[RMDB]
RNA sequence: GGGAACGACUCGAGUAGAGUCGAAAACGCUGGGUCCGACAGGAGGUAAAUGAGGGAGCUGAAGCGCGCACGGCGAAGAACUCAUUUAAAUAUCUGCGGACCUGUGCUGAAGCGCGCACGGCAACCGAAAGGUGCGAUUUAGUAAUUCGUUACUAAAUGCUUACACUGUGUUCGCACAGUGUAAGCAAAAAGAAACAACAACAACAAC
Reactivity to 2A3 in 0.01 (KOAc 150mM, MgCl2 10mM, bicine 150mM(pH8.5), 24C), signal-to-noise 1, nucleotides 027 to 156: c010g000c000u010g000g000g010u000c010c000g110a300c160a100g110g160a130g000g230u070a000a000a000u000g000a000g000g020g010a020g000c000u050g010a270a040g030c040g000c000g000c000a020c000g000g000c010g050a210a000g000a040a000c000u000c000a000u010u020u100a090a190a040u300a050u050c000u000g000c000g000g000a000c000c000u000g010u020g000c000u070g060a210a060g090c030g000c020g000c000a000c000g050g000c080a120a050c020c010g060a010a060a150g060g000u030g000c000g070a010u050u010u010a000g000u000a010a000u020u070c300g030u080u030a000c010u000a000a010a050
Annotation
Structure probing data (2A3) for a 207-nucleotide construct. Source: RMDB library RNAMAK, as collected in RNAgym. For 2A3, 644 sequencing reads were counted.